About this RNA: Chemical mapping of a 177-nucleotide RNA with DMS and 2A3. The 2A3 profile rests on 1,327 reads. The RNA was probed in 150 mM KOAc, 10 mM MgCl2 and 150 mM bicine (pH 8.5) at 24 C. DMS adducts were read by reverse transcription with MarathonRT. For DMS, 1,519 sequencing reads were counted.
RNA sequence: GGGAACGACUCGAGUAGAGUCGAAAAGAAAGAAAAGAACCUGGACGAGGACAGAAAACUGGAACGGACCAAAGCCAAAAAGGAAAGGACGAAAAUCCUAAGUCCUACGAGGUAAAAGAAAAGAAAAGCUAUGAUAUCGUUUCGACGAUAUCAUAGCAAAAGAAACAACAACAACAAC
Reactivity to DMS in 0.01 (KOAc 150mM, MgCl2 10mM, bicine 150mM(pH8.5), 24C), signal-to-noise 2, nucleotides 027 to 126: g010a020a010a140g000a150a160a250a210g010a230a040c010c190u000g000g020a070c090g000a030g000g010a030c000a090g000a020a000a170a140c220u000g000g010a040a120c090g000g010a020c020c040a000a070a090g030c080c000a000a120a090a250a080g000g000a030a040a020g000g000a030c000g030a020a030a060a270u000c000c000u010a120a090g000u000c000c000u000a040c140g000a060g000g000u000a020a100a000a060g000a030a030a010a240g020a080a100a140a180
Reactivity to 2A3 in 0.01 (KOAc 150mM, MgCl2 10mM, bicine 150mM(pH8.5), 24C), signal-to-noise 1, nucleotides 027 to 126: g030a000a010a000g120a020a080a010a000g030a030a000c060c000u020g000g040a010c010g000a010g050g060a000c040a050g150a070a170a030a060c070u110g010g020a080a040c020g000g060a050c000c000a010a160a010g050c000c020a120a110a000a000a000g110g000a100a000a080g080g000a010c050g090a050a200a000a000u010c000c000u040a020a000g020u000c010c000u000a020c060g070a020g000g000u070a000a010a020a060g130a160a160a010a000g080a000a080a000a040